[RMDB]
RNA sequence: GGGAACGACUCGAGUAGAGUCGAAAAGAUAUGGAGAGCGUGUAUGAACUACGAGAUGUAUCGGAAACGAUACUACCUCGCAUACAAGCGCUCUCCUAAGUCAAAGUUCGGUGUUCGCACCGAACAAGUAACAACAUCUGUUCGCAGAUGUUGUUACAAAAGAAACAACAACAACAAC
Reactivity to DMS in 0.01 (KOAc 150mM, MgCl2 10mM, bicine 150mM(pH8.5), 24C), signal-to-noise 6, nucleotides 027 to 126: g010a040u010a300u010g010g010a010g010a010g010c000g050u000g010u000a050u000g000a130a070c120u020a290c030g000a010g000a030u000g000u000a000u000c000g010g000a100a130a170c000g020a000u000a000c000u010a080c130c000u000c000g000c010a040u000a080c020a120a300g010c020g010c010u000c000u000c000c000u000a000a090g000u010c030a130a120a180g010u000u000c000g020g020u000g020u000u010c260g010c010a030c000c000g010a000a000c020a030a070
Reactivity to 2A3 in 0.01 (KOAc 150mM, MgCl2 10mM, bicine 150mM(pH8.5), 24C), signal-to-noise 6, nucleotides 027 to 126: g000a020u060a020u120g010g000a000g000a000g010c020g030u090g050u140a050u050g060a210a160c160u210a120c300g000a000g000a010u020g000u000a010u000c000g010g020a050a030a020c010g010a000u010a010c000u040a040c000c000u000c010g010c050a060u060a100c040a080a090g060c000g010c010u020c000u000c000c000u000a020a000g000u000c040a150a080a020g000u010u000c000g030g000u010g030u040u090c300g010c140a000c000c010g010a010a000c000a000a000